[RMDB]
RNA sequence: GGGAACGACUCGAGUAGAGUCGAAAAUGAUUGACAGGCGAGGGCAGUCUGACCCAUCGAAUCCGUCAGGAUGGCGUUACUUACUGAUUAGUAUGUAUCGCAUUACCGCGUGGCGGAGGAAAGGAAUAUUGUUGAUCAGCCACCAUAUCGUUGAGAAACUGACUCUUACAUUCGUGUAAGAGUCAGUAAAAGAAACAACAACAACAAC
Reactivity to DMS in 0.01 (KOAc 150mM, MgCl2 10mM, bicine 150mM(pH8.5), 24C), signal-to-noise 2, nucleotides 027 to 156: u000g000a040u000u000g020a040c000a090g050g000c060g000a070g040g050g000c030a090g020u000c120u030g000a280c000c000c000a300u000c040g040a280a120u000c010c030g020u000c070a080g040g020a130u010g030g000c050g030u000u000a010c020u000u000a000c000u010g000a270u000u010a090g060u000a040u000g000u000a000u000c010g040c000a100u000u000a040c010c030g030c040g000u010g000g020c000g010g010a050g010g000a090a120a080g000g010a110a070u000a080u000u000g030u020u000g000a070u000c050a090g010c060c070a050c060c020a080u000a050u010c020g010u030u000g010a250g000a210a080
Reactivity to 2A3 in 0.01 (KOAc 150mM, MgCl2 10mM, bicine 150mM(pH8.5), 24C), signal-to-noise 2, nucleotides 027 to 156: u070g000a030u060u050g000a080c100a080g000g030c020g060a060g000g040g000c050a040g070u050c070u110g200a240c000c000c000a060u040c020g030a010a030u010c000c000g050u010c000a000g000g090a060u170g090g010c030g000u000u010a000c000u050u000a000c000u020g170a300u110u130a000g000u010a020u040g020u000a000u020c000g000c030a010u030u090a100c010c080g040c110g110u070g000g000c000g000g000a000g000g000a140a030a010g080g020a030a050u130a080u150u120g010u040u020g040a060u030c010a010g070c010c020a080c060c030a050u080a050u210c060g010u030u060g100a090g090a160a130